Structure probing data (DMS and 2A3) for a 177-nucleotide construct. The RNA was probed in 150 mM KOAc, 10 mM MgCl2 and 150 mM bicine (pH 8.5) at 24 C. The data come from the RNA Mapping Database (RMDB), libraries RFM100 and RFMREP. For 2A3, 4,394 sequencing reads were counted.
RNA sequence: GGGAACGACUCGAGUAGAGUCGAAAAGCAGGUUUGAUGUACAGACCACAGAGCAGUCGAAUAGAGCAGUCCUUCUAAGGUUAUCCAAAGAUACCCCCGUAGUGAACUUUCCCUUUAUCGCUUUAAAAGACUAAAAGUGUUUCGACACUUUUAGUCUAAAAGAAACAACAACAACAAC
Reactivity to DMS in 0.01 (KOAc 150mM, MgCl2 10mM, bicine 150mM(pH8.5), 24C), signal-to-noise 5, nucleotides 027 to 126: g010c070a090g020g000u000u010u010g000a110u010g000u020a150c080a090g020a070c040c030a080c090a090g020a100g000c050a050g000u000c020g010a080a090u010a070g010a080g010c040a070g010u000c030c020u000u000c040u020a100a130g000g000u010u030a020u020c020c050a030a100a090g030a100u010a080c050c000c030c020c030g010u010a030g010u000g010a030a060c060u010u010u020c010c010c020u010u010u020a060u020c130g010c040u010u020u020a040a070a050
Reactivity to 2A3 in 0.01 (KOAc 150mM, MgCl2 10mM, bicine 150mM(pH8.5), 24C), signal-to-noise 5, nucleotides 027 to 126: g040c040a030g020g060u020u050u040g100a100u100g050u130a050c020a030g050a020c010c010a030c040a020g050a010g000c040a020g030u060c000g020a080a050u070a120g040a020g020c030a010g040u070c010c000u020u040c030u080a070a030g030g020u050u050a040u050c030c030a110a040a020g050a040u080a070c010c010c010c000c000g040u040a030g030u020g070a030a010c030u020u020u020c010c000c000u000u050u070a120u100c040g030c030u070u000u030a070a140a030